[RMDB]
RNA sequence: GGGAACGACUCGAGUAGAGUCGAAAAUAAAAGGAGGAUGAGAAAUAUAGAGUGAUAUCGGUACUCCCACGCGCGUCUCUCAUUGAUAAGAGUGAUAAAAGGGUGAUUAUGUUAUAGCGCGCAAAAACAUGAAUUAAGUCUUCGGACUUAAUUCAUGAAAAGAAACAACAACAACAAC
Reactivity to 2A3 in 0.01 (KOAc 150mM, MgCl2 10mM, bicine 150mM(pH8.5), 24C), signal-to-noise 3, nucleotides 027 to 126: u090a010a050a010a010g060g010a010g020g000a050u050g010a030g060a060a120a020u220a030u060a110g100a020g110u120g080a040u040a010u120c010g000g010u020a040c020u010c020c000c020a030c030g030c010g000c000g080u000c010u020c010u020c030a090u040u100g050a010u040a160a070g050a000g060u050g060a040u090a080a100a000a020g070g030g000u050g080a080u040u170a040u140g080u090u090a110u060a090g000c010g000c000g000c000a060a010a010a000a020
Reactivity to DMS in 0.01 (KOAc 150mM, MgCl2 10mM, bicine 150mM(pH8.5), 24C), signal-to-noise 4, nucleotides 027 to 126: u000a040a050a120a110g010g000a050g020g010a120u000g000a090g000a070a090a090u000a160u000a070g000a110g010u000g000a060u000a070u000c050g010g020u010a170c100u000c010c010c030a110c140g010c020g030c020g010u000c020u000c020u000c030a120u010u010g000a080u010a070a080g000a040g000u000g000a050u000a020a030a060a100g000g000g010u000g000a080u000u000a040u000g010u010u010a090u000a140g000c020g010c020g020c110a050a040a030a050a110